[RMDB]
RNA sequence: GGGAACGACUCGAGUAGAGUCGAAAAGAAAAAAGUGGGAAUGACUCAAAUCUUCACUGAAUCUGGUGAAUUAAUUCCAGUAACUGUUGUUGAAGCUACUCCAAAUGUAGUAUUACAGUUAAAAACAUACCAUAAAUAUGUUCGCAUAUUUAUGGUAAAAAGAAACAACAACAACAAC
Reactivity to DMS in 0.01 (KOAc 150mM, MgCl2 10mM, bicine 150mM(pH8.5), 24C), signal-to-noise 4, nucleotides 027 to 126: g020a000a090a100a100a130a080g010u010g000g000g010a030a040u020g010a170c090u000c170a070a080a130u000c100u000u000c000a010c030u000g000a080a070u010c030u000g000g020u000g000a070a080u010u010a070a100u000u000c000c000a070g000u000a040a030c060u000g010u000u000g010u000u010g020a120a140g000c010u000a010c010u010c220c300a060a100a070u020g020u010a010g010u000a070u000u000a020c030a030g000u000u010a020a040a040a070a070c140a150
Reactivity to 2A3 in 0.01 (KOAc 150mM, MgCl2 10mM, bicine 150mM(pH8.5), 24C), signal-to-noise 1, nucleotides 027 to 126: g070a040a110a030a020a030a010g150u130g040g000g000a040a040u070g100a080c010u030c090a080a140a120u060c030u200u100c030a010c000u020g050a070a060u060c040u060g040g000u000g030a100a080u080u150a070a010u070u040c000c010a020g010u020a040a030c020u020g010u080u000g090u060u130g110a060a020g020c000u010a000c030u020c130c020a050a210a070u200g000u030a010g010u010a000u180u150a030c000a000g010u030u030a060a080a000a020a000c040a030
This 177-nucleotide RNA was probed chemically with DMS and 2A3. For DMS the reverse transcriptase was MarathonRT. The RNA was probed in 150 mM KOAc, 10 mM MgCl2 and 150 mM bicine (pH 8.5) at 24 C. High 2A3 reactivity points to a flexible backbone, as in loops and unpaired stretches. For 2A3 the reverse transcriptase was SuperScript II with manganese.